[RMDB]
Structure probing data (DMS and 2A3) for a 207-nucleotide construct. High DMS reactivity at an A or C suggests that its Watson-Crick edge is free.
RNA sequence: GGGAACGACUCGAGUAGAGUCGAAAAUGCAUCUUCGGAUGCAAAAAAAGGGGUCGUCCUUGGACCGGUACCUAGGCAUCGAUCCUGAAGCCUCCACGGGGGAGCCUAGUACCGCUAGGACGACGGAGGCACCCAAAAAACGGUAUUCGUACCGUAAAGAUACUCCAAAUUUCGAUUUGGAGUAUCUAAAAGAAACAACAACAACAAC
Reactivity to DMS in 0.01 (KOAc 150mM, MgCl2 10mM, bicine 150mM(pH8.5), 24C), signal-to-noise 1, nucleotides 027 to 156: u000g010c000a030u000c010u010u010c300g030g020a010u010g000c010a000a000a020a020a030a060a050g000g010g020g020u000c040g030u000c010c010u000u000g080g000a090c300c020g000g170u000a010c120c050u000a020g030g030c010a210u000c070g030a070u010c010c030u000g010a120a090g020c020c030u010c020c030a300c060g040g040g000g080g020a110g000c000c000u000a050g000u000a040c010c010g000c090u010a030g000g010a010c010g030a000c020g000g010a030g010g010c000a180c000c010c010a000a060a090a090a100a040c010g030g010u000a000u000u010c200g030u010a000c000c000g050u010a020a100
Reactivity to 2A3 in 0.01 (KOAc 150mM, MgCl2 10mM, bicine 150mM(pH8.5), 24C), signal-to-noise 3, nucleotides 027 to 156: u050g000c000a010u000c010u080u070c230g160g000a020u050g000c070a010a050a040a000a020a000a100g080g010g020g000u000c010g010u000c010c000u020u020g090g060a190c200c040g000g020u070a080c050c040u010a020g010g000c030a160u240c170g190a240u130c020c010u010g020a070a000g000c000c010u000c010c030a000c030g010g000g000g020g040a020g010c000c000u010a020g030u100a080c020c000g000c010u000a000g000g010a000c020g000a010c000g000g000a000g000g010c000a050c000c000c010a070a110a020a000a030a010c000g000g010u010a030u040u140c180g060u050a010c010c010g020u030a100a060

Values cover nucleotides 27 to 156.
The data come from the RNA Mapping Database (RMDB), library RNAMAK.
For DMS the reverse transcriptase was MarathonRT.
The DMS profile rests on 2,179 reads.
For 2A3, 2,390 sequencing reads were counted.